[RMDB]
RNA sequence: GGGAACGACUCGAGUAGAGUCGAAAAAGGGCUGGAUUCGUCCAGCCCUGCACAUUCGUACGCAACGAAGCGUACGUCAUUACGCAAAUGACGUAUAGCGUAGAACCACGGACUUCGGUCCGUGGAAUCUCUAUUAGACGUUCGCGUCUAAUAGAGAAAAAGAAACAACAACAACAAC
Reactivity to 2A3 in 0.01 (KOAc 150mM, MgCl2 10mM, bicine 150mM(pH8.5), 24C), signal-to-noise 5, nucleotides 027 to 126: a000g000g000g000c000u010g000g010a020u040u060c120g050u010c050c000a000g000c000c000c000u000g000c000a020c000a100u090u090c040g090u110a050c060g010c120a140a040c080g110a130a030g020c010g020u010a000c010g000u000c000a010u000u110a090c110g020c260a090a030a040u030g010a010c010g010u020a020u080a110g000c020g010u030a040g040a070a040c000c000a000c000g000g000a000c000u060u070c250g080g000u000c000c000g000u000g000g000a000a000
Reactivity to DMS in 0.01 (KOAc 150mM, MgCl2 10mM, bicine 150mM(pH8.5), 24C), signal-to-noise 9, nucleotides 027 to 126: a010g000g010g020c000u000g000g000a030u000u010c200g020u000c000c000a000g010c000c000c000u000g010c120a080c170a210u010u000c040g020u000a060c100g020c100a110a080c110g000a090a140g000c060g000u000a000c010g010u000c020a010u000u000a080c300g020c280a080a030a020u000g000a010c010g010u000a020u000a080g010c010g000u010a090g010a110a210c010c000a010c000g000g010a010c000u000u010c170g010g010u000c000c000g020u000g000g000a020a020
Chemical mapping of a 177-nucleotide RNA with 2A3 and DMS. 2A3 adducts were read by reverse transcription with SuperScript II with manganese. For DMS the reverse transcriptase was MarathonRT.